The data come from the RNA Mapping Database (RMDB), library VIROID.
The record gives the reactivity of an RNA of 207 nucleotides to 2A3.
[RMDB]
RNA sequence: GGGAACGACUCGAGUAGAGUCGAAAAGGCGUAGCCCCUGUUCAGACAGGAGUAAUCCCAGCUGAAACAGGGUUUUCACCCUUCCUUUCUUCUGGUUUCCUUCCUCUGCUUCAGCGGCCUCGCCCGGAACCUCUUGACCAGCGCAGGUGCUGACGCGCCCUAAUGGACGGUUCGCCGUCCAUUAGGGAAAAGAAACAACAACAACAAC
Reactivity to 2A3 in 0.01 (KOAc 150mM, MgCl2 10mM, bicine 150mM(pH8.5), 24C), signal-to-noise 2, nucleotides 027 to 156: g010g000c030g010u010a000g000c000c000c000c000u000g000u000u010c000a030g010a110c110a120g000g020a000g050u050a020a020u060c000c010c000a020g000c020u010g020a020a030a070c300a270g030g000g000u030u020u150u190c060a010c000c020c000u010u000c000c000u000u010u010c000u040u000c010u030g030g000u000u000u000c010c000u000u050c010c000u000c020u030g120c200u020u020c000a000g000c000g050g000c000c000u000c010g010c020c010c000g030g040a050a080c020c020u030c070u170u160g120a130c040c060a040g000c020g060c070a090g020g180u150g150c030u050g040a090c050g010c020g010